Conditions: 150 mM KOAc, 10 mM MgCl2 and 150 mM bicine (pH 8.5), 24 C. Chemical mapping of a 177-nucleotide RNA with 2A3 and DMS. 2A3 adducts were read by reverse transcription with SuperScript II with manganese.

RNA sequence: GGGAACGACUCGAGUAGAGUCGAAAAGCCCGAAAGUUCGCUUUCGGGCAAAACAAAGCUCCUGCGGGAGCAAAGCACACGCAGAAAAACAGUGCAAAAGCAAAAGUACCGUGUUCGCACGGUACAACUAUCGUAGUGUGUUCGCACACUACGAUAGAAAAGAAACAACAACAACAAC
Reactivity to 2A3 in 0.01 (KOAc 150mM, MgCl2 10mM, bicine 150mM(pH8.5), 24C), signal-to-noise 2, nucleotides 027 to 126: g010c020c010c010g010a000a000a010g020u090u180c190g040c170u000u020u000c000g000g010g020c000a000a000a000a000c000a000a080a000g000c000u000c000c000u020g020c160g030g000g000a020g000c000a020a000a020g000c000a000c010a010c070g080c110a070g180a130a190a020a030a000c040a020g030u020g030c010a010a130a030a020g040c030a030a050a040a100g010u010a010c000c010g000u000g020u010u080c190g030c070a000c010g020g010u010a000c010a010a000
Reactivity to DMS in 0.01 (KOAc 150mM, MgCl2 10mM, bicine 150mM(pH8.5), 24C), signal-to-noise 1, nucleotides 027 to 126: g010c000c000c000g000a030a000a030g000u020u000c280g000c020u000u000u000c000g000g010g030c020a020a010a060a060c060a060a110a140g000c010u000c000c000u000g030c120g000g030g000a010g010c010a030a030a070g040c030a030c040a050c100g000c120a040g000a050a030a070a080a070c170a120g010u000g010c010a120a100a080a100g030c090a060a090a170a100g020u000a000c000c000g020u000g000u000u000c170g070c020a030c020g000g000u000a000c020a060a130

The DMS profile rests on 768 reads.